The data come from the RNA Mapping Database (RMDB), library M2PK50. This 177-nucleotide RNA was probed chemically with DMS and 2A3. For DMS, 3,913 sequencing reads were counted. As a SHAPE reagent, 2A3 marks flexible, mostly unpaired nucleotides at the ribose 2'-OH. The RNA was probed in 150 mM KOAc, 10 mM MgCl2 and 150 mM bicine (pH 8.5) at 24 C. DMS adducts were read by reverse transcription with MarathonRT. Values cover nucleotides 27 to 126. Values are in units of 0.01, from 0 to 300, in steps of 10.
RNA sequence: GGGAACGACUCGAGUAGAGUCGAAAACCGUUGCCGUUCGCGGCAACGGGAAGCAAGCAAGCAGCGCAACGAGACAAGACGAUAAUGAGAUCGGGCAUGCUGAAAAGCCACGCUUCGGCGUGGCUAACGUUAUGAGAUGGUUCGCCAUCUCAUAACGAAAAGAAACAACAACAACAAC
Reactivity to DMS in 0.01 (KOAc 150mM, MgCl2 10mM, bicine 150mM(pH8.5), 24C), signal-to-noise 4, nucleotides 027 to 126: c000c000g030u000u000g000c010c000g030u000u010c190g040c010g030g010c000a000a010c000g000g000g000a070a070g010c140a110a080g000c120a080a030g010c000a050g000c120g010c030a050a050c040g000a030g020a080c040a080a090g010a110c140g010a100u010a090a070u000g000a100g010a070u000c050g000g010g000c030a060u000g000c040u000g010a070a080a120a050g000c000c000a000c000g020c000u000u020c180g010g000c010g050u000g000g010c000u000a000a030
Reactivity to 2A3 in 0.01 (KOAc 150mM, MgCl2 10mM, bicine 150mM(pH8.5), 24C), signal-to-noise 3, nucleotides 027 to 126: c000c000g000u000u000g000c010c010g010u040u050c230g000c010g130g000c000a000a000c000g020g010g000a000a020g080c060a060a000g040c020a050a000g000c000a000g060c040g000c090a110a160c040g010a010g050a070c030a070a060g070a060c100g050a050u080a220a110u250g080a080g010a110u020c000g000g000g020c010a030u040g000c010u070g030a060a110a030a000g000c010c000a000c010g000c010u050u060c160g050g000c000g010u000g000g000c000u000a010a000